This 207-nucleotide RNA was probed chemically with 2A3.
[RMDB]
RNA sequence: GGGAACGACUCGAGUAGAGUCGAAAAUUGAUGAGGUGAUGUCGCUGCGGGAUGGGGAUGACGGCUCCGGUGAGCUUGGCGAGUUUGCCGACGUCCGUGAGGCUAAGUUUUUGCUCGAAGGUGCAGAAAAUGGUGCUGUCCAUGGCGCCGGUGGUUCCGCCGAAAUAUACUUCGGUAUAUUUCGGCGAAAAGAAACAACAACAACAAC
Reactivity to 2A3 in 0.01 (KOAc 150mM, MgCl2 10mM, bicine 150mM(pH8.5), 24C), signal-to-noise 1, nucleotides 027 to 156: u090u040g020a060u060g010a010g000g040u050g010a060u040g020u050c050g000c080u030g030c040g000g030g000a020u020g050g020g000g000a010u080g010a010c030g020g000c040u020c050c000g040g000u050g010a000g040c000u020u040g010g020c050g000a040g050u030u090u190g040c000c000g040a050c050g020u050c020c040g020u030g050a000g040g000c030u030a030a070g010u000u010u010u080u090g000c020u030c050g060a060a010g070g010u050g030c000a000g070a010a100a010a010u040g050g020u080g010c020u040g040u060c070c010a060u050g000g000c000g000c000c000g000g000u040g030g000u000u060c010
For 2A3 the reverse transcriptase was SuperScript II with manganese.